RNA sequence: GGGAACGACUCGAGUAGAGUCGAAAAGGGAAACUCAGGUCACAUGUUACAUGUAUGCAGUUUUCUAGUGUACAAGAAGCUCUUUAAAUUAUAUUAAUGAGAUCUUGAGCUGGAUGCGGUGGCUCAUGCCUAUAAUCCCAGCACUUUGAGAGGCCAAGUUGUUUACUACUUUCGAGUAGUAAACAACAAAAGAAACAACAACAACAAC
Reactivity to 2A3 in 0.01 (KOAc 150mM, MgCl2 10mM, bicine 150mM(pH8.5), 24C), signal-to-noise 3, nucleotides 027 to 156: g000g010g000a070a100a000c070u050c050a060g030g050u090c040a020c000a070u110g050u150u230a070c050a040u100g070u140a030u160g010c030a030g020u060u100u140u000c000u050a020g020u010g030u040a060c000a000a020g010a120a020g030c000u000c000u020u090u080a080a130a080u260u220a130u190a170u300u040a100a040u050g010a010g000a010u000c000u010u010g010a010g010c020u010g000g020a020u050g020c050g040g040u030g030g000c000u010c100a030u080g010c000c000u120a090u050a050a060u020c010c010c000a010g060c040a040c030u130u130u070g070a090g010a040g080g000c040c030a040a020
Reactivity to DMS in 0.01 (KOAc 150mM, MgCl2 10mM, bicine 150mM(pH8.5), 24C), signal-to-noise 1, nucleotides 027 to 156: g020g000g000a060a110a080c000u030c050a070g040g020u000c110a050c050a110u000g010u000u000a070c050a110u000g030u000a120u000g000c020a080g000u000u000u000u010c030u010a070g030u010g020u000a090c040a020a040g000a080a220g010c040u000c010u000u000u000a020a020a170u000u020a260u010a300u000u010a030a030u040g000a010g000a300u010c020u000u000g010a060g000c070u010g040g010a060u000g010c090g020g050u000g020g030c050u040c030a040u010g010c000c020u000a070u010a080a090u000c040c010c080a180g000c040a040c130u000u010u010g000a120g010a080g030g040c020c030a050a260

The record gives the reactivity of an RNA of 207 nucleotides to 2A3 and DMS. DMS adducts were read by reverse transcription with MarathonRT.